[RMDB]
Structure probing data (DMS) for a 177-nucleotide construct.
Reactivities are rounded to 0.1 and cut off at 0 and 3.
The data come from the RNA Mapping Database (RMDB), library OK2TST.
The RNA was probed in 150 mM KOAc, 10 mM MgCl2 and 150 mM bicine (pH 8.5) at 24 C.
The DMS profile rests on 1,138 reads.
RNA sequence: GGGAACGACUCGAGUAGAGUCGAAAAUUCUGGGAAGAAGUUGCAGCUUACAUUGUCUACAGAGUUACAAGCAUUCGCAGAUGCUUUACUUUUAGAUCAUGAAAAAACGGAACAAUUUCGUUCAGCACAGAAAAGCUGAUUUCGAUCAGCUUUUCUGAAAAGAAACAACAACAACAAC
Reactivity to DMS in 0.01 (KOAc 150mM, MgCl2 10mM, bicine 150mM(pH8.5), 24C), signal-to-noise 2, nucleotides 027 to 126: u020u010c030u000g030g010g010a090a070g000a050a080g030u000u000g020c040a100g030c110u000u000a120c010a020u000u000g010u000c000u010a010c300a030g000a020g020u000u000a080c150a020a010g020c010a020u000u010c220g030c300a120g010a010u000g000c010u000u000u000a060c000u010u000u000u000a010g000a030u000c180a040u000g000a020a020a020a040a050a090c080g020g000a080a090c100a060a080u000u010u000c040g020u000u000c030a040g010c290a160